[RMDB]
RNA sequence: GGGAACGACUCGAGUAGAGUCGAAAAAUGGUCUGAUAUUAUCUGUCUGUAUUUAUGGAGAGGAACUUCAACACACUCACGAUUUAUGUUUAAUCUCACUUUUGACGGCAGGAUAAAUCUUAGUGUCCUACACAACAACCUUCUUGAAGACCAGUGACUCCUGAUUAUUAUUCGUAAUAAUCAGGAGAAAAGAAACAACAACAACAAC
Reactivity to 2A3 in 0.01 (KOAc 150mM, MgCl2 10mM, bicine 150mM(pH8.5), 24C), signal-to-noise 9, nucleotides 027 to 156: a000u030g010g000u010c020u040g040a030u040a120u160u060a050u030c020u010g050u000c040u110g080u060a160u050u160u030a120u150g030g000a030g010a020g060g040a050a040c010u100u090c080a110a030c040a020c010a030c090u130c050a080c090g070a080u020u130u100a070u120g060u000u030u060a090a090u030c010u010c020a110c090u050u100u040u130g060a020c030g000g000c020a020g080g000a010u030a030a060a030u020c030u040u060a050g020u010g020u050c010c050u100a050c040a000c000a130a070c000a030a050c020c010u110u130c030u060u120g050a060a000g010a010c000c010a010g020u010g110a030
Reactivity to DMS in 0.01 (KOAc 150mM, MgCl2 10mM, bicine 150mM(pH8.5), 24C), signal-to-noise 5, nucleotides 027 to 156: a100u000g010g020u000c010u000g010a160u000a060u000u010a050u000c020u000g010u000c020u010g030u000a100u000u000u000a090u010g020g010a070g010a100g010g010a060a130c080u000u010c100a080a110c130a070c050a060c040u010c050a060c120g000a090u000u000u000a060u030g000u000u000u020a050a080u000c030u000c010a100c140u000u010u000u000g000a130c150g010g020c030a030g010g010a050u000a030a050a070u000c050u000u000a090g030u000g010u010c030c030u000a080c120a070c060a040a060c050a030a070c030c020u000u000c080u000u010g010a120a070g000a030c010c010a070g010u000g000a190